[RMDB]
RNA sequence: GGGAACGACUCGAGUAGAGUCGAAAAACCAAGUCUGGGGGCCGAUGAGGGUUGGCUCAAAGUAGGGUUUUGACUUGAAAACUCAAGCUGUGACCUCAAAACGAUGGAGGUAAAUGAGAAUCCUCCUAAAACUAUGGACACUUCGGUGUCCAUAGAACGCUCAAUACUUCUUCGGAAGUAUUGAGCGAAAAGAAACAACAACAACAAC
Reactivity to 2A3 in 0.01 (KOAc 150mM, MgCl2 10mM, bicine 150mM(pH8.5), 24C), signal-to-noise 1, nucleotides 027 to 156: a000c030c000a030a000g050u030c020u020g020g030g000g020g000c020c020g030a010u030g150a150g050g100g030u070u070g000g030c010u010c050a040a030a010g050u070a060g030g000g030u040u010u020u060g040a050c000u050u020g070a120a130a000a000c010u010c010a000a000g000c090u080g050u050g130a120c000c000u060c060a060a020a010a030c050g040a050u100g000g010a010g010g010u090a050a130a080u280g000a150g030a040a030u040c010c000u000c000c010u030a030a050a000a010c000u010a000u000g000g000a000c000a000c010u020u030c210g050g000u000g000u000c000c000a000u000a000g010a020a000
Chemical mapping of a 207-nucleotide RNA with 2A3. Source: RMDB library M2RFPK, as collected in RNAgym. Conditions: 150 mM KOAc, 10 mM MgCl2 and 150 mM bicine (pH 8.5), 24 C.